[RMDB]
RNA sequence: GGGAACGACUCGAGUAGAGUCGAAAAAUAUCACAACGUUUAGACUGGCGUACGUUAGUGACGUGUUUCUCUACAAACGAAGCACAUCAAAUAUGUAGUUUAAAUGAUUUUUAUCAAAUAUGGACACCUUGGGGAGACCUUUCGAGGUCUCCCCAAGAAAAGAAACAACAACAACAAC
Reactivity to 2A3 in 0.01 (KOAc 150mM, MgCl2 10mM, bicine 150mM(pH8.5), 24C), signal-to-noise 2, nucleotides 027 to 126: a000u180a010u300c030a000c010a070a000c100g010u000u070u000a030g000a010c080u030g300g000c070g040u180a030c100g120u180u180a100g170u090g120a030c050g000u000g000u040u010u010c010u080c090u160a140c240a060a120a040c080g120a000a010g060c000a000c000a000u120c000a060a000a130u180a030u140g030u010a070g130u000u000u000a000a140a000u180g070a260u070u090u090u140u050a170u130c040a000a030a080u110a010u000g000g030a090c000a010c100
Conditions: 150 mM KOAc, 10 mM MgCl2 and 150 mM bicine (pH 8.5), 24 C.
An RNA of 177 nucleotides, treated with 2A3 and read out base by base.